[RMDB]
Conditions: 150 mM KOAc, 10 mM MgCl2 and 150 mM bicine (pH 8.5), 24 C. Chemical mapping of a 177-nucleotide RNA with DMS and 2A3.
RNA sequence: GGGAACGACUCGAGUAGAGUCGAAAAGAUUGGGCCAUUAUUAAAGCAGCUUUAGAACCAUUUCAAACAGAAGAAGAUAGUGUUUCAGUUUCUGAUGCCCCUGGAAGCUGUAUAAUAGAUUGUAAUGGCGUUAGCCGAAAUUCGUUUCGGCUAACGCAAAAGAAACAACAACAACAAC
Reactivity to DMS in 0.01 (KOAc 150mM, MgCl2 10mM, bicine 150mM(pH8.5), 24C), signal-to-noise 2, nucleotides 027 to 126: g000a120u050u020g010g000g000c040c000a010u000u000a030u000u010a000a140a150g000c010a020g030c000u020u030u030a040g000a120a090c030c000a070u030u020u000c150a080a130a140c040a060g000a080a080g010a020a090g000a040u000a050g010u020g000u010u020u000c050a100g040u030u020u020c000u020g020a110u010g000c020c000c000c040u010g000g000a070a000g030c000u000g000u000a000u040a020a090u030a080g000a130u020u000g000u000a020a050u000g000
Reactivity to 2A3 in 0.01 (KOAc 150mM, MgCl2 10mM, bicine 150mM(pH8.5), 24C), signal-to-noise 2, nucleotides 027 to 126: g090a030u100u120g000g080g000c020c020a020u100u090a080u080u140a120a070a000g040c010a000g020c000u110u020u080a010g030a070a060c000c000a110u070u110u110c060a060a050a050c040a150g070a070a000g060a090a020g030a100u250a110g190u010g100u110u000u030c040a050g000u020u040u000c000u000g060a090u060g030c000c000c000c000u030g010g030a000a020g000c000u000g040u010a010u010a020a210u030a030g130a140u140u150g050u070a000a150u010g010

Description: The DMS profile rests on 1,811 reads. Source: RMDB library OK1LIB, as collected in RNAgym.